[RMDB]
RNA sequence: GGGAACGACUCGAGUAGAGUCGAAAACAAAACAGACAGCAUCCUAAUGCAAGGAAGCAUGGUGUUAUGAAGUGGCUACAGAAGGUUUGAAACCUAGCUUGCAAUUUGUGUGACAUUAUUUAAUUUCCUAAACCUCAUUUUCAUCCUCUGUAAAAUACAGGCAUUUAGGGUUCGCCCUAAAUGCCUGAAAAGAAACAACAACAACAAC
Reactivity to 2A3 in 0.01 (KOAc 150mM, MgCl2 10mM, bicine 150mM(pH8.5), 24C), signal-to-noise 1, nucleotides 027 to 156: c010a000a080a000a010c010a000g150a000c020a020g000c000a020u060c000c010u180a160a030u060g010c060a100a210g010g050a160a010g020c020a030u030g020g080u040g000u060u050a100u060g030a090a000g010u010g010g010c030u000a000c000a040g110a040a050g110g000u030u110u110g040a030a000a000c000c000u010a020g060c020u000u020g000c020a030a080u160u220u030g040u000g080u040g020a000c010a120u030u000a100u100u300u130a090a170u160u080u000c000c000u100a070a160a110c000c070u000c030a020u000u060u130u110c000a000u070c040c060u010c030u040g060u100a080a020a000a130u260a120
This 207-nucleotide RNA was probed chemically with 2A3. 2A3 adducts were read by reverse transcription with SuperScript II with manganese. Source: RMDB library OK3TST, as collected in RNAgym. Reactivities are given for positions 27 through 156.